[RMDB]
RNA sequence: GGGAACGACUCGAGUAGAGUCGAAAAACUGACGUUACGCCGUCAGAACGGUAGAAAAGAUGGUUUGAAAACCACGCCUUCUACCAAUAUAGUAAAUAAAUAGGCGGAGCGGUCAUACGUGACCGCAAAAACAUCCUUGGCUUCGGCCAAGGAUGAAGAACCUUUUGAAGUUCGCUUCAAAAGGUUCAAAAGAAACAACAACAACAAC
Reactivity to 2A3 in 0.01 (KOAc 150mM, MgCl2 10mM, bicine 150mM(pH8.5), 24C), signal-to-noise 2, nucleotides 027 to 156: a000c000u000g000a000c010g010u050u150a070c090g020c060c000g030u010c000a000g000a060a040c060g070g000u000a010g040a010a010a010a000g070a270u040g010g070u020u060u170g180a180a160a000a000c010c000a000c000g000c010c000u000u020c000u000a000c000c000a010a000u100a030u040a020g060u050a010a060a120u060a030a070a060u100a030g010g000c000g010g000a010g020c000g000g010u000c010a010u030a090c160g040u020g000a000c000c000g000c000a000a000a000a000a020c000a000u010c000c000u000u000g000g000c000u000u070c100g050g000c000c010a000a000g000g000a000u000g000a000a000